[RMDB]
RNA sequence: GGGAACGACUCGAGUAGAGUCGAAAAGGACGGCCAACCACGAUCCAACUGGCACCUGCUUGAUGGGCUUGUGAUGGUGUCAUGAUACGUUGCUGAUCAUCAGCAACCGCAUCUUGCAUGCGAAUACCACAAGGUAGCCGUUCGCGGCUACCUUGUGAAAAGAAACAACAACAACAAC
Reactivity to 2A3 in 0.01 (KOAc 150mM, MgCl2 10mM, bicine 150mM(pH8.5), 24C), signal-to-noise 1, nucleotides 027 to 126: g050g000a020c030g090g070c010c000a010a000c090c000a030c000g030a070u060c000c000a020a010c020u010g030g000c010a090c050c140u110g000c020u010u060g000a050u080g040g040g000c020u040u100g040u060g030a040u040g000g040u000g010u030c020a030u110g030a040u050a060c050g010u000u000g000c000u000g040a130u160c080a060u030c010a040g000c010a010a010c020c020g010c000a000u030c020u090u240g030c080a020u020g010c010g000a100a050u130a150c030
Reactivity to DMS in 0.01 (KOAc 150mM, MgCl2 10mM, bicine 150mM(pH8.5), 24C), signal-to-noise 2, nucleotides 027 to 126: g000g040a100c000g000g000c020c030a060a130c060c020a120c060g020a060u000c020c050a040a110c020u040g000g020c030a210c170c180u040g000c030u000u010g020a090u010g010g020g000c120u020u000g000u010g000a110u000g010g030u000g000u000c030a020u000g000a100u020a050c110g000u000u000g030c000u000g030a150u000c210a150u000c000a000g000c000a000a010c010c050g000c010a000u000c020u000u000g020c190a020u000g000c010g000a110a100u010a100c250